RNA sequence: GGGAACGACUCGAGUAGAGUCGAAAAACGCCUGGGACGACCGUCUGGUGGCGCUUGGGGGCCGCAACGGCAAAGUCGAGGAAGGGGACCCGCGCGUCGUCCUCCCCGCGGGCGCCGCCGCCGCCGCCGGGCCGCGCUCCCCGUUCCGCAGCGCGGCGGCACGUACUUUUUUCGAAAAGUACGUGCCAAAAGAAACAACAACAACAAC
Reactivity to 2A3 in 0.01 (KOAc 150mM, MgCl2 10mM, bicine 150mM(pH8.5), 24C), signal-to-noise 1, nucleotides 027 to 156: a020c110g050c040c000u060g010g000g070a020c010g020a080c050c020g040u070c180u250g070g000u000g020g040c000g000c000u080u120g020g010g020g000g030c070c050g030c170a130a110c030g010g030c070a150a160a020g070u150c030g020a160g050g020a090a090g030g030g010g000a060c040c000c000g050c040g000c040g030u030c000g010u020c050c040u040c000c010c010c000g180c020g000g010g020c020g020c010c010g000c000c000g000c010c000g000c000c030g110c000c000g020g000g010c030c000g020c000g020c000u040c000c010c030c030g030u140u070c010c030g020c150a020g000c000g000c000g010g030c060